[RMDB]
Chemical mapping of a 177-nucleotide RNA with DMS and 2A3. For DMS the reverse transcriptase was MarathonRT. The data come from the RNA Mapping Database (RMDB), library M2PK90. For DMS, 1,388 sequencing reads were counted.
RNA sequence: GGGAACGACUCGAGUAGAGUCGAAAAGCAAAGAAAUUUUAUCCCAAUAAGGCGAAGUAAGCAAGUCGACCCAACGCGAGGGCGCUAGGGAGCUUACGAGCCCUAGCAGAAUAAUCGCGAGAAAAAAUCAAUCAGACAAGUUCGCUUGUCUGAUUGAAAAAGAAACAACAACAACAAC
Reactivity to DMS in 0.01 (KOAc 150mM, MgCl2 10mM, bicine 150mM(pH8.5), 24C), signal-to-noise 2, nucleotides 027 to 126: g050c150a060a070a100g010a070a070a080u000u000u000u000a140u000c000c010c000a100a170u020a050a070g000g010c060g040a090a090g000u010a080a060g010c020a080a100g010u000c020g000a140c000c000c000a110a090c030g010c000g000a030g010g000g020c160g010c000u000a010g000g000g000a070g000c060u000u000a040c230g000a070g020c000c000c010u000a000g010c030a040g020a100a050u000a070a070u000c010g010c020g010a190g000a000a030a070a070a080a120
Reactivity to 2A3 in 0.01 (KOAc 150mM, MgCl2 10mM, bicine 150mM(pH8.5), 24C), signal-to-noise 2, nucleotides 027 to 126: g010c050a070a080a040g180a080a190a040u140u130u090u080a080u120c000c000c000a020a050u180a070a000g060g000c040g050a020a010g070u060a050a000g100c050a040a020g020u030c030g020a200c010c010c000a080a020c000g000c010g030a000g000g050g000c010g000c000u000a010g000g040g000a020g000c030u140u070a010c120g000a000g030c000c000c000u010a020g000c040a000g110a190a050u160a090a060u020c010g000c040g010a050g090a020a110a030a020a000a000